Conditions: 150 mM KOAc, 10 mM MgCl2 and 150 mM bicine (pH 8.5), 24 C. Chemical mapping of a 177-nucleotide RNA with 2A3. 2A3 adducts were read by reverse transcription with SuperScript II with manganese. Values cover nucleotides 27 to 126. The data come from the RNA Mapping Database (RMDB), library OK1LIB.
RNA sequence: GGGAACGACUCGAGUAGAGUCGAAAAGCUCUGAGAGGCAGAUCGAACAACAAAGAGAGAUCGAAAAUCUUAGGGGAGAGAACGAAUCUGUCGUCUUCUCUAGGACAUUGUCGAUCAGAUGUCCAAAGAGCAAUCAUUGCUUCGGCAAUGAUUGCUCAAAAGAAACAACAACAACAAC
Reactivity to 2A3 in 0.01 (KOAc 150mM, MgCl2 10mM, bicine 150mM(pH8.5), 24C), signal-to-noise 2, nucleotides 027 to 126: g060c080u040c010u010g020a010g010a020g030g000c000a000g000a040u000c020g040a020a030c010a040a010c020a010a300a000g140a000g000a000g000a020u000c030g120a070a080a000a000u000c000u020u020a020g000g000g070g020a000g000a000g000a090a000c030g000a020a060u230c130u300g210u130c000g110u080c000u000u000c000u000c000u040a000g030g000a000c000a080u160u000g130u000c010g000a000u010c030a000g020a050u060g060u000c000c000a020a210a000